An RNA of 177 nucleotides, treated with DMS and 2A3 and read out base by base. High DMS reactivity at an A or C suggests that its Watson-Crick edge is free. 2A3 adducts were read by reverse transcription with SuperScript II with manganese. The RNA was probed in 150 mM KOAc, 10 mM MgCl2 and 150 mM bicine (pH 8.5) at 24 C. It was measured as part of the RMDB library OK2TST. DMS adducts were read by reverse transcription with MarathonRT. For DMS, 3,522 sequencing reads were counted.
[RMDB]
RNA sequence: GGGAACGACUCGAGUAGAGUCGAAAAGAGGUGAGGCAGUCGCACGCGGGGGAGAUAGGCAUUUCGAUCCUUUCUCGGCGGGUCGAUCCCGCCUGACAAGAGAUAACUUACCCGACUAGUGCGGGUAUGUUGCUGUAUCUUUCGAGAUACAGCAACAAAAAGAAACAACAACAACAAC
Reactivity to DMS in 0.01 (KOAc 150mM, MgCl2 10mM, bicine 150mM(pH8.5), 24C), signal-to-noise 4, nucleotides 027 to 126: g010a090g010g020u000g020a070g000g020c080a070g010u000c040g030c070a060c100g010c070g020g000g030g000g010a070g000a080u010a060g000g020c140a080u010u000u020c110g010a120u000c010c020u000u000u010c030u000c040g000g000c060g020g000g010u010c130g010a120u010c010c020c010g010c030c030u000g010a060c110a050a070g010a110g000a070u020a060a130c110u000u000a030c000c000c000g000a030c020u030a140g010u010g010c020g000g000g000u000a010
Reactivity to 2A3 in 0.01 (KOAc 150mM, MgCl2 10mM, bicine 150mM(pH8.5), 24C), signal-to-noise 2, nucleotides 027 to 126: g040a030g040g010u030g010a060g010g000c020a040g030u080c030g010c050a010c020g070c020g050g000g020g010g020a040g010a040u110a050g030g010c050a050u040u120u100c070g020a060u060c020c000u010u090u040c020u000c010g030g020c000g000g020g020u090c050g020a070u050c000c000c010g010c000c030u020g000a010c040a040a060g040a000g020a080u050a140a020c020u020u010a010c000c000c000g000a010c040u110a070g010u080g300c020g010g000g000u020a050